[RMDB]
RNA sequence: GGGAACGACUCGAGUAGAGUCGAAAAAGGAAGACGAUGUGUUGACCGGCUGCCGUUUGAGGACUUUGGUCACCCAGACUAGACACCUUCUGUGCUCAUGUUUGGAAAGCUGAAAGGGAAGGACAGCGUCCAACAGGACAUUCGUGUCCUGUUGGACAAAAGAAACAACAACAACAAC
Reactivity to 2A3 in 0.01 (KOAc 150mM, MgCl2 10mM, bicine 150mM(pH8.5), 24C), signal-to-noise 3, nucleotides 027 to 126: a010g130g010a020a030g020a020c070g040a120u110g070u020g010u100u040g020a030c030c030g010g000c030u040g030c010c010g120u010u110u150g130a090g010g040a030c020u070u080u100g020g000u040c010a040c010c010c000a020g010a020c020u050a050g020a030c010a030c030c020u160u060c080u220g040u030g000c010u030c020a060u100g060u050u030u000g040g000a100a040a010g010c000u040g020a040a060a050g030g000g000a030a010g020g020a020c000a010g030c030
Reactivity to DMS in 0.01 (KOAc 150mM, MgCl2 10mM, bicine 150mM(pH8.5), 24C), signal-to-noise 4, nucleotides 027 to 126: a070g000g000a040a060g000a050c080g000a120u010g000u010g020u010u010g010a220c080c020g000g000c060u010g010c020c050g020u010u000u000g010a150g000g010a060c060u000u000u000g020g010u010c030a150c200c010c020a050g000a040c030u010a210g000a070c040a060c010c150u000u010c130u010g000u000g010c130u000c090a120u000g000u000u010u000g020g020a070a120a120g010c050u010g000a060a040a100g000g000g010a040a050g000g000a060c050a030g000c070
Annotation
Structure probing data (2A3 and DMS) for a 177-nucleotide construct. 2A3 adducts were read by reverse transcription with SuperScript II with manganese. Conditions: 150 mM KOAc, 10 mM MgCl2 and 150 mM bicine (pH 8.5), 24 C. The data come from the RNA Mapping Database (RMDB), library OK2TRN.